RNA sequence: GGGAACGACUCGAGUAGAGUCGAAAAAAAGUUAGCGUACUAGAGUCGCCGUGAGUACGCUAUGGUUCCGUGAGACUCUACUCCAGCGUAUCACGGAACCCACGUACAUACCGUACGUGCUAUAAAACCUACAGCCUAAGUUCGCUUAGGCUGUAGGAAAAGAAACAACAACAACAAC
Reactivity to DMS in 0.01 (KOAc 150mM, MgCl2 10mM, bicine 150mM(pH8.5), 24C), signal-to-noise 4, nucleotides 027 to 126: a050a030a040g010u010u000a000g010c000g010u000a000c010u010a090g000a120g000u000c050g020c050c060g010u010g000a060g010u000a000c000g000c000u000a000u000g020g000u000u000c000c000g010u000g000a050g000a030c010u010c020u000a090c110u000c140c120a090g010c220g000u010a120u000c000a000c000g000g000a020a000c010c020c010a000c000g000u000a010c000a090u000a070c260c170g010u000a000c000g010u000g000c040u000a070u010a050a070a090a120
Reactivity to 2A3 in 0.01 (KOAc 150mM, MgCl2 10mM, bicine 150mM(pH8.5), 24C), signal-to-noise 3, nucleotides 027 to 126: a000a000a020g030u020u010a000g000c000g010u000a020c000u030a030g100a100g150u140c070g000c150c040g170u130g060a000g000u000a000c000g020c000u000a010u030g000g000u000u020c000c000g010u000g000a020g010a000c010u020c010u050a060c020u080c060c020a040g020c050g120u130a040u050c000a010c020g000g000a000a000c020c000c000a000c000g000u020a000c000a030u180a170c050c050g010u000a000c010g010u000g010c010u100a120u070a140a080a030a050
Description:
This 177-nucleotide RNA was probed chemically with DMS and 2A3. The reactions ran in a buffer of 150 mM KOAc, 10 mM MgCl2 and 150 mM bicine (pH 8.5), at 24 C. The DMS profile rests on 4,058 reads. Reactivities are given for positions 27 through 126. Source: RMDB library M2PK90, as collected in RNAgym.